[RMDB]
Source: RMDB libraries RFM100 and RFMREP, as collected in RNAgym. Chemical mapping of a 177-nucleotide RNA with 2A3 and DMS. The reactions ran in a buffer of 150 mM KOAc, 10 mM MgCl2 and 150 mM bicine (pH 8.5), at 24 C. For DMS the reverse transcriptase was MarathonRT.
RNA sequence: GGGAACGACUCGAGUAGAGUCGAAAAAAAACGGUAAUCUUCUUUCCCAGUCCGAUUCGACCAUGACGAUCAGGGUUUCUACCACGUCCAUCUUUCUCUGACUUGACUCUCUCUUCUCUUCGGAGGAGGUAAAACUAGGUUUCGACCUAGUUUUACCAAAAGAAACAACAACAACAAC
Reactivity to 2A3 in 0.01 (KOAc 150mM, MgCl2 10mM, bicine 150mM(pH8.5), 24C), signal-to-noise 7, nucleotides 027 to 126: a000a000a000a000c090g020g010u080a100a080u050c100u120u010c000u020u040u030c010c000c010a010g040u010c020c010g020a050u050u060c040g040a060c030c020a060u100g050a040c040g030a050u090c070a100g040g000g030u030u040u040c040u060a050c010c010a030c040g040u000c010c000a050u010c020u010u080u000c010u000c000u030g040a060c020u040u070g020a040c000u010c000u000c000u000c000u070u000c010u010c000u050u050c080g070g010a030g020g040a030
Reactivity to DMS in 0.01 (KOAc 150mM, MgCl2 10mM, bicine 150mM(pH8.5), 24C), signal-to-noise 3, nucleotides 027 to 126: a010a010a020a020c100g000g000u020a060a050u010c040u030u010c040u010u000u010c010c000c000a150g010u020c040c050g000a160u020u020c040g010a110c070c040a050u010g030a110c090g000a070u010c070a100g010g000g000u000u010u000c060u010a090c060c040a080c070g000u000c010c040a050u000c030u000u010u010c030u000c010u000g000a100c040u030u000g010a090c030u010c010u000c040u010c000u000u010c000u000c020u010u010c100g020g000a050g000g010a050